[RMDB]
RNA sequence: GGGAACGACUCGAGUAGAGUCGAAAAGUGCAAGAAGAAGCACAACCAGUAGAAGUACCUGUUGAAGAUAUUGCGCAGGUUGUCAUAGCUGACACCUUACAGGAAACUCCUGUUGUGCCUGAUACUGCUUCCCUAACAAGUUCGCUUGUUAGGGAAGAAAAGAAACAACAACAACAAC
Reactivity to DMS in 0.01 (KOAc 150mM, MgCl2 10mM, bicine 150mM(pH8.5), 24C), signal-to-noise 4, nucleotides 027 to 126: g010u000g020c090a090a080g010a130a100g010a130a220g000c020a020c000a030a040c160c170a060g010u000a050g010a090a070g010u000a120c010c000u000g010u000u020g010a100a120g010a120u000a060u010u000g010c110g020c180a050g000g010u000u010g020u000c010a030u000a170g010c210u000g000a030c020a020c010c020u000u000a020c000a000g010g000a080a070a070c030u000c020c010u000g010u000u000g010u000g010c000c070u010g010a080u010a110c100u010g000
Reactivity to 2A3 in 0.01 (KOAc 150mM, MgCl2 10mM, bicine 150mM(pH8.5), 24C), signal-to-noise 3, nucleotides 027 to 126: g050u040g030c040a010a060g040a080a020g070a050a000g120c000a000c000a000a010c060c050a000g010u060a020g030a130a010g000u020a030c000c010u000g040u070u070g090a100a040g070a130u070a100u200u300g080c140g000c040a000g000g000u020u110g000u010c020a010u070a100g060c070u050g020a000c000a000c000c000u010u020a020c000a000g010g000a080a040a030c010u010c000c010u000g010u000u010g010u000g000c000c020u060g000a030u040a090c000u010g000